[RMDB]
RNA sequence: GGGAACGACUCGAGUAGAGUCGAAAAUAGGGCUUCGGCCCUAGCCUUGAUAUGGAACGACCCAGGUGAAGUGGAGCGAAGAACUAAGCUCGGAAACGAGCUUAGGGAGCUCCAUGGAGGCCUGCGUUCCUAAGUCGAUUUUCUGUUUCGACAGAAAAACUGAAUAGGCAUUCGUGCCUAUUCAGUUAAAAGAAACAACAACAACAAC
Reactivity to DMS in 0.01 (KOAc 150mM, MgCl2 10mM, bicine 150mM(pH8.5), 24C), signal-to-noise 1, nucleotides 027 to 156: u000a010g040g020g000c000u010u000c170g020g030c010c000c010u000a000g020c030c040u000u020g000a150u030a100u010g000g000a080a100c010g000a200c080c200c080a030g020g050u010g000a300a300g020u010g020g000a040g010c020g000a140a200g000a090a220c000u000a020a020g000c000u000c020g000g000a090a050a200c000g050a030g020c020u000u000a000g000g000g000a170g020c000u030c020c000a010u000g010g010a300g030g000c010c000u010g020c000g000u000u000c040c000u000a010a170g000u000c010g000a160u010u020u000u000c000u000g000u000u010u020c140g010a050c010a130g000a050a020a050
Reactivity to 2A3 in 0.01 (KOAc 150mM, MgCl2 10mM, bicine 150mM(pH8.5), 24C), signal-to-noise 3, nucleotides 027 to 156: u060a010g010g000g010c010u050u090c300g160g010c030c000c000u000a010g040c000c000u010u110g020a010u010a020u070g000g000a000a000c000g040a040c100c290c070a010g000g020u050g030a040a010g010u000g020g010a000g010c030g130a300a030g010a040a000c000u000a000a000g000c010u000c010g010g000a000a010a000c000g000a000g010c000u000u000a000g000g000g000a000g000c000u010c000c000a000u010g000g010a020g250g110c000c000u010g000c000g000u000u000c010c000u010a010a010g020u010c030g060a100u050u050u050u050c030u030g040u030u060u110c130g070a030c020a040g120a040a090a080
Annotation:
This 207-nucleotide RNA was probed chemically with DMS and 2A3. The RNA was probed in 150 mM KOAc, 10 mM MgCl2 and 150 mM bicine (pH 8.5) at 24 C. The 2A3 profile rests on 2,773 reads.